[RMDB]
RNA sequence: GGGAACGACUCGAGUAGAGUCGAAAAACUUGCCUUUUCGUGUAUAGUAGUUUCCUAACUUCUUGUUCUAGAUUAAGCUUCAGUGAAAAGUGAUUAAUAUGAUAGCAGUGUAGAUAACUGUAUGAUAGUUAUUGUGCACAUGACUUCCAUGCAGCAAAGGGGCUUCAUCGUUCGCGAUGAAGCCCCUAAAAGAAACAACAACAACAAC
Reactivity to DMS in 0.01 (KOAc 150mM, MgCl2 10mM, bicine 150mM(pH8.5), 24C), signal-to-noise 1, nucleotides 027 to 156: a100c040u000u010g010c010c030u020u000u010u040c070g030u010g010u000a120u000a060g000u010a030g020u010u000u000c050c010u000a070a180c080u000u010c060u000u020g010u010u010c040u000a100g000a140u000u020a080a100g000c050u000u000c000a060g030u000g000a040a040a020a040g010u000g010a140u010u010a090a110u000a060u000g000a090u010a060g060c060a110g010u020g040u020a230g000a050u000a070a020c000u000g060u000a110u000g010a050u000a040g020u000u000a010u000u000g040u000g000c100a090c070a060u000g000a120c010u000u030c040c010a010u010g020c050a100g040c050a060a030
Reactivity to 2A3 in 0.01 (KOAc 150mM, MgCl2 10mM, bicine 150mM(pH8.5), 24C), signal-to-noise 2, nucleotides 027 to 156: a000c060u060u030g010c040c010u080u050u090u140c230g010u200g020u080a100u050a110g040u010a030g000u030u020u000c030c000u050a130a100c020u060u050c010u040u100g130u110u020c030u060a010g010a170u170u060a170a020g020c010u020u030c040a070g000u030g110a050a070a040a000g070u040g030a030u020u030a100a080u070a060u140g050a050u070a010g010c050a030g010u000g000u160a030g050a100u030a050a020c000u010g020u150a090u110g060a060u060a020g020u010u000a000u060u030g130u060g080c040a020c060a050u080g030a010c010u000u000c020c000a040u060g020c000a000g000c000a000a040